[RMDB]
Background:
An RNA of 207 nucleotides, treated with DMS and 2A3 and read out base by base. For DMS the reverse transcriptase was MarathonRT. The RNA was probed in 150 mM KOAc, 10 mM MgCl2 and 150 mM bicine (pH 8.5) at 24 C. For 2A3 the reverse transcriptase was SuperScript II with manganese. It was measured as part of the RMDB library RNAMAK. For 2A3, 17,006 sequencing reads were counted. Reactivities are given for positions 27 through 156.
RNA sequence: GGGAACGACUCGAGUAGAGUCGAAAACACGCUGGGAGCUGUGGCAUAAGAGGUAGCUAAUCCUACUGAAGCGCGCACGGUAGGACAACUACUACCCACCUUAUGCGUAACAUCAGCUCCUGUGCUGAAGCGCGCACGGCAACCGAAAGGUGCGAUGGUUGAUACAUUUGUUCGCAAAUGUAUCAACAAAAGAAACAACAACAACAAC
Reactivity to DMS in 0.01 (KOAc 150mM, MgCl2 10mM, bicine 150mM(pH8.5), 24C), signal-to-noise 2, nucleotides 027 to 156: c040a100c040g000c030u010g020g020g010a050g010c010u000g040u010g000g000c040a040u010a020a030g030a200g010g010u000a040g010c020u010a140a190u000c020c000u000a080c010u010g040a040a080g030c030g010c000g040c040a300c080g000g020u000a010g010g020a040c050a100a150c000u010a010c010u020a030c030c010c040a300c100c000u010u000a060u010g010c000g040u000a030a090c120a110u000c040a010g010c010u000c050c010u010g000u010g010c000u010g020a040a050g040c020g010c000g000c020a180c040g000g000c050a060a110c020c010g020a070a070a210g010g020u000g000c010g000a070u000g010
Reactivity to 2A3 in 0.01 (KOAc 150mM, MgCl2 10mM, bicine 150mM(pH8.5), 24C), signal-to-noise 7, nucleotides 027 to 156: c040a000c020g020c010u030g000g000g010a000g000c000u000g010u050g080g010c010a000u000a000a010g040a020g020g000u000a010g020c050u090a160a190u060c010c000u000a000c000u020g050a200a040g010c010g000c000g000c000a010c010g000g010u010a000g000g010a010c030a040a010c070u080a010c000u050a060c030c070c020a090c000c010u000u000a000u010g000c020g040u080a030a030c050a180u270c000a010g000c000u000c000c000u000g000u010g000c010u040g020a140a030g000c000g000c000g000c010a010c010g010g010c020a050a060c020c000g050a110a040a020g000g000u020g010c010g080a160u170g140